[RMDB]
RNA sequence: GGGAACGACUCGAGUAGAGUCGAAAAUGUAGAAAAUAUGUGUUAGAGGACAAGACCUGUCUCUUCGGCUUAUGACCCAUAUAUUCAACUGCCUACCCAACAUCUUUUCUUGAAUGCCUUAGAACAGUAGUUCUCAAACUUUUUUGACUCAGGGUCACCCCAGUCGUAUGUUCGCAUACGACUGGGGAAAAGAAACAACAACAACAAC
Reactivity to 2A3 in 0.01 (KOAc 150mM, MgCl2 10mM, bicine 150mM(pH8.5), 24C), signal-to-noise 2, nucleotides 027 to 156: u080g030u060a030g060a040a090a080a040u190a080u040g080u040g030u050u050a090g000a000g010g020a040c020a050a120g120a130c050c000u010g030u040c130u000c000u200u040c010g040g000c010u240u070a040u230g080a060c000c000c040a010u010a010u020a030u100u090c140a110a100c010u000g060c000c010u010a050c000c030c000a040a030c040a150u020c130u060u150u070u000c000u000u070g030a130a010u090g040c010c020u030u020a060g010a020a020c010a040g110u150a010g000u040u010c060u000c010a040a100a160c000u060u040u000u060u070u300g060a040c010u050c200a130g020g000g000u000c010a020